The data come from the RNA Mapping Database (RMDB), library OK1LIB.
Chemical mapping of a 177-nucleotide RNA with 2A3 and DMS.
For 2A3, 4,673 sequencing reads were counted.
For 2A3 the reverse transcriptase was SuperScript II with manganese.
DMS adducts were read by reverse transcription with MarathonRT.
The RNA was probed in 150 mM KOAc, 10 mM MgCl2 and 150 mM bicine (pH 8.5) at 24 C.

[RMDB]
RNA sequence: GGGAACGACUCGAGUAGAGUCGAAAAGAGACACCACUGUGUUUUGCCAAAACCACCACCAUCCAGCGCAUUUAACAAGGAGCAUUGUUUUUGUGUCGCGCUCUCUUUGUUUACUUUCUCGCGACGACCUAUAGGGAGGAUUCGUCCUCCCUAUAGGAAAAGAAACAACAACAACAAC
Reactivity to 2A3 in 0.01 (KOAc 150mM, MgCl2 10mM, bicine 150mM(pH8.5), 24C), signal-to-noise 5, nucleotides 027 to 126: g110a000g010a000c020a010c050c040a070c080u090g030u010g040u070u020u060u080g030c020c020a020a080a030a060c020c020a010c010c000a010c000c010a030u050c010c010a010g010c010g010c110a100u040u070u130a050a030c030a010a020g020g010a020g040c100a140u050u060g120u050u050u050u090u090g110u020g000u020c020g000c010g010c010u000c000u000c010u030u010u020g050u030u060u020a110c070u050u080u040c090u040c040g010c010g020a030c010g020a050
Reactivity to DMS in 0.01 (KOAc 150mM, MgCl2 10mM, bicine 150mM(pH8.5), 24C), signal-to-noise 6, nucleotides 027 to 126: g000a090g000a100c060a040c030c090a100c090u010g000u000g000u000u020u010u010g020c030c060a050a050a120a100c100c020a090c030c020a030c030c020a080u010c020c040a070g000c040g020c080a070u010u020u020a020a040c070a030a040g000g000a030g010c300a100u010u010g000u000u010u000u020u010g010u020g010u000c020g000c040g000c250u010c010u010c040u000u000u000g010u000u010u020a070c100u010u010u010c040u000c030g010c020g020a040c030g010a190